The record gives the reactivity of an RNA of 177 nucleotides to DMS and 2A3.
The RNA was probed in 150 mM KOAc, 10 mM MgCl2 and 150 mM bicine (pH 8.5) at 24 C.
For DMS the reverse transcriptase was MarathonRT.
2A3 adducts were read by reverse transcription with SuperScript II with manganese.
For DMS, 1,201 sequencing reads were counted.
It was measured as part of the RMDB library M2PK50.
The 2A3 profile rests on 2,329 reads.
RNA sequence: GGGAACGACUCGAGUAGAGUCGAAAACCCACGACUUUCGAGUCGUGGGAAAUAUAAUCAGCGGUAAUUAAUUAGCUCCGCUUACCGCUGAAGCGGAGCAUACACGUCUAGGAUUCGUCCUAGACAACACAUGAGAGUUGUUCGCAACUCUCAUGUGAAAAGAAACAACAACAACAAC
Reactivity to DMS in 0.01 (KOAc 150mM, MgCl2 10mM, bicine 150mM(pH8.5), 24C), signal-to-noise 1, nucleotides 027 to 126: c000c000c000a050c000g010a000c000u000u000u010c180g010a040g000u000c010g050u000g000g000g000a000a000a050u000a130u000a140a130u000c000a000g010c000g000g000u010a010a020u020u000a070a040u020u000a150g010c000u000c030c000g000c040u000u000a030c010c010g000c010u000g020a000a010g000c010g000g010a020g010c000a160u000a070c300a040c220g010u000c000u000a000g000g000a050u000u020c150g000u010c010c000u000a010g010a000c000a060a160
Reactivity to 2A3 in 0.01 (KOAc 150mM, MgCl2 10mM, bicine 150mM(pH8.5), 24C), signal-to-noise 2, nucleotides 027 to 126: c000c000c000a000c000g000a000c010u040u100u190c240g090a000g000u000c000g000u040g000g010g020a010a120a010u250a020u040a070a150u030c020a010g030c020g050g190u100a050a040u240u260a030a050u070u100a160g000c000u020c000c000g000c030u010u000a140c010c000g000c030u000g010a010a000g020c000g000g000a010g000c000a000u100a020c090a020c070g010u000c000u000a000g010g000a000u050u100c180g040u030c040c000u010a000g000a000c000a000a000